RNA sequence: GGGAACGACUCGAGUAGAGUCGAAAAUCAUUGACACCUACAUUAUCGCUCCAAUCGAGAAGAUCGAGACGACGAAUGCGUUGAAAACUCUGAUCGCUGUUAUAUCGGCUUCUCAGAACUCGUUGAACUCGGGGAAAGGAUUCGUCCUUUCCCCGAGAAAAGAAACAACAACAACAAC
Reactivity to DMS in 0.01 (KOAc 150mM, MgCl2 10mM, bicine 150mM(pH8.5), 24C), signal-to-noise 1, nucleotides 027 to 126: u020c200a260u000u000g020a100c150a000c090c040u000a080c040a020u000u010a120u000c060g000c020u000c050c030a070a160u010c110g010a050g010a070a060g020a100u000c030g000a030g000a170c120g030a030c020g000a170a040u030g000c060g030u020u000g020a040a100a130a100c160u000c060u000g000a060u000c150g030c060u000g000u020u020a130u000a150u000c010g010g000c030u000u000c070u000c010a090g000a060a170c190u000c090g000u000u000g000a020a110
Structure probing data (DMS) for a 177-nucleotide construct. DMS adducts were read by reverse transcription with MarathonRT. The RNA was probed in 150 mM KOAc, 10 mM MgCl2 and 150 mM bicine (pH 8.5) at 24 C. In probing experiments dimethyl sulfate is read out at A N1 and C N3, which are open when not base-paired. It was measured as part of the RMDB library OK2TST. The DMS profile rests on 504 reads.